Record summary: The record gives the reactivity of an RNA of 177 nucleotides to 2A3 and DMS. The DMS profile rests on 844 reads. Conditions: 150 mM KOAc, 10 mM MgCl2 and 150 mM bicine (pH 8.5), 24 C. Values cover nucleotides 27 to 126. DMS adducts were read by reverse transcription with MarathonRT.
RNA sequence: GGGAACGACUCGAGUAGAGUCGAAAAGGGUUGCCGUAGCGGGAGUAGACGAAGUGCUCGACCUCGCCGGUGAACGACGCCUCGGCGGCCUCGGCGCUCUCGUAGACGAAACCCGAGGUCAGGUACACGCAUCGACCAUAUUCGUAUGGUCGAUGCGAAAAGAAACAACAACAACAAC
Reactivity to 2A3 in 0.01 (KOAc 150mM, MgCl2 10mM, bicine 150mM(pH8.5), 24C), signal-to-noise 1, nucleotides 027 to 126: g090g040g000u030u040g110c160c010g000u050a000g000c030g030g070g050a050g000u090a010g060a030c080g000a220a040g140u170g110c060u090c050g120a220c050c000u050c000g010c000c010g000g010u020g030a080a020c050g130a040c010g010c020c030u050c030g050g000c000g060g000c000c000u000c010g010g020c030g030c030u010c010u000c040g060u030a040g030a090c020g000a080a030a030c010c000c020g000a040g010g000u080c040a020g070g060u150a040c060a010
Reactivity to DMS in 0.01 (KOAc 150mM, MgCl2 10mM, bicine 150mM(pH8.5), 24C), signal-to-noise 1, nucleotides 027 to 126: g000g000g030u000u000g010c100c030g000u010a070g030c030g000g000g020a110g030u010a060g010a050c040g000a080a100g010u000g000c050u020c050g010a040c040c030u000c050g020c020c000g030g030u000g030a040a100c030g020a110c100g010c170c040u020c100g000g000c010g000g010c020c010u000c000g000g070c000g000c070u000c030u000c060g010u000a100g000a060c070g000a190a030a290c080c000c000g000a030g010g000u010c030a030g000g020u000a090c060a150